[RMDB]
RNA sequence: GGGAACGACUCGAGUAGAGUCGAAAACGCUGGGCUAUUGGCGAGCAGACCCAUCGAUGAGUCCUGAAGCGCGCACGGGACGAGAUGCUGCUCGGCAAUAGCCUGUGCUGAAGCGCGCACGGCAACCGAAAGGUGCGUCACGAUGUUUUCGAACAUCCUUUGCAAAUUAGUUCGCUAAUUUGCAAAGAAAAGAAACAACAACAACAAC
Reactivity to DMS in 0.01 (KOAc 150mM, MgCl2 10mM, bicine 150mM(pH8.5), 24C), signal-to-noise 2, nucleotides 027 to 156: c020g030c000u000g020g010g000c000u000a020u000u000g000g010c020g050a030g070c000a020g000a300c080c300c030a110u020c040g040a120u000g020a300g020u000c000c020u000g020a060a070g010c000g010c000g010c000a300c010g020g050g020a060c000g020a050g010a030u000g000c020u000g000c030u010c000g020g000c000a030a030u000a040g000c000c000u000g030u000g030c000u000g030a060a020g040c030g030c000g000c020a300c050g000g030c000a060a050c010c020g000a110a070a130g010g020u000g000c030g020u000c010a170c050g050a060u000g010u000u000u000u010c140g040a070a020c020a070u000c030
Reactivity to 2A3 in 0.01 (KOAc 150mM, MgCl2 10mM, bicine 150mM(pH8.5), 24C), signal-to-noise 4, nucleotides 027 to 156: c000g010c000u000g000g000g010c000u010a010u010u010g160g180c020g000a000g010c030a000g020a130c190c250c040a030u010c020g300a300u190g090a030g020u010c010c010u040g040a200a060g010c000g000c000g000c000a010c000g010g000g000a000c010g020a050g010a060u010g030c010u000g000c000u000c010g010g000c000a000a000u000a000g000c020c000u010g000u000g000c000u030g010a120a050g000c000g000c000g000c000a010c020g000g000c010a010a000c010c000g030a100a010a030g000g000u010g020c020g020u060c030a050c120g010a010u010g070u000u040u080u130c170g110a040a000c000a010u030c000
Structure probing data (DMS and 2A3) for a 207-nucleotide construct. Source: RMDB library RNAMAK, as collected in RNAgym. The 2A3 profile rests on 4,794 reads. For 2A3 the reverse transcriptase was SuperScript II with manganese. Conditions: 150 mM KOAc, 10 mM MgCl2 and 150 mM bicine (pH 8.5), 24 C.